[RMDB]
RNA sequence: GGGAACGACUCGAGUAGAGUCGAAAAGGGCCUGCGCCUGGCCUGCAACAUGUUCCGGCAGACCAGCCUGCGCAGCUGGAUCCAGGCGAACUAUGGAGCGAUGCUGGACGCAUUUGCGACUGUGGGAGAUAUAACUCACAUUCGUGUGAGUUAUAUCAAAAGAAACAACAACAACAAC
Reactivity to DMS in 0.01 (KOAc 150mM, MgCl2 10mM, bicine 150mM(pH8.5), 24C), signal-to-noise 9, nucleotides 027 to 126: g000g000g010c110c040u000g010c030g020c020c010u000g010g010c120c020u000g010c040a050a070c120a070u010g010u000u000c020c030g010g020c020a040g000a260c020c010a020g010c140c060u010g020c110g020c080a120g010c050u000g010g010a160u000c020c030a070g010g010c060g000a070a090c050u000a060u000g000g000a300g010c030g000a040u000g010c010u000g010g010a240c160g010c020a040u000u000u010g020c020g010a120c040u000g010u000g010g000g000a180
Reactivity to 2A3 in 0.01 (KOAc 150mM, MgCl2 10mM, bicine 150mM(pH8.5), 24C), signal-to-noise 9, nucleotides 027 to 126: g040g000g030c020c030u050g020c020g000c010c010u000g010g000c000c010u010g020c010a050a060c040a150u170g060u100u050c030c000g060g010c020a010g030a060c010c010a000g020c010c050u130g030c090g010c050a030g000c010u020g000g010a020u020c020c020a020g040g020c030g020a050a030c020u040a070u110g020g010a030g010c020g010a020u040g010c020u110g110g120a060c070g000c010a050u060u070u300g030c030g070a100c040u040g010u060g050g020g000a150
This 177-nucleotide RNA was probed chemically with DMS and 2A3. For DMS, 40,732 sequencing reads were counted. The data come from the RNA Mapping Database (RMDB), library OK2TRN. Values cover nucleotides 27 to 126. High 2A3 reactivity points to a flexible backbone, as in loops and unpaired stretches.